[RMDB]
RNA sequence: GGGAACGACUCGAGUAGAGUCGAAAAGAUAUGGAAACUGGGCCAUCGGGUCCAACAGCUCGGAAACGAGACAUGGACCCAAUGGCUGCAGUUUCCUAAGUCAAAGCAGGAACUUCGGUUCCUGCAAGACUAACCGAGUGUUCGCACUCGGUUAGUCAAAAGAAACAACAACAACAAC
Reactivity to DMS in 0.01 (KOAc 150mM, MgCl2 10mM, bicine 150mM(pH8.5), 24C), signal-to-noise 1, nucleotides 027 to 126: g010a030u010a300u000g000g000a000a010a000c010u000g000g000g000c000c000a010u000c060g010g050g000u010c020c020a010a020c220a140g000c000u000c000g000g000a050a100a290c000g030a010g000a020c120a150u000g000g010a010c000c000c010a040a000u000g000g010c000u000g010c000a000g000u010u000u000c000c000u010a000a040g000u010c000a080a180a200g000c000a000g000g000a000a000c000u000u000c190g030g010u000u010c000c010u000g000c000a010a020
Structure probing data (DMS) for a 177-nucleotide construct. DMS adducts were read by reverse transcription with MarathonRT. The reactions ran in a buffer of 150 mM KOAc, 10 mM MgCl2 and 150 mM bicine (pH 8.5), at 24 C.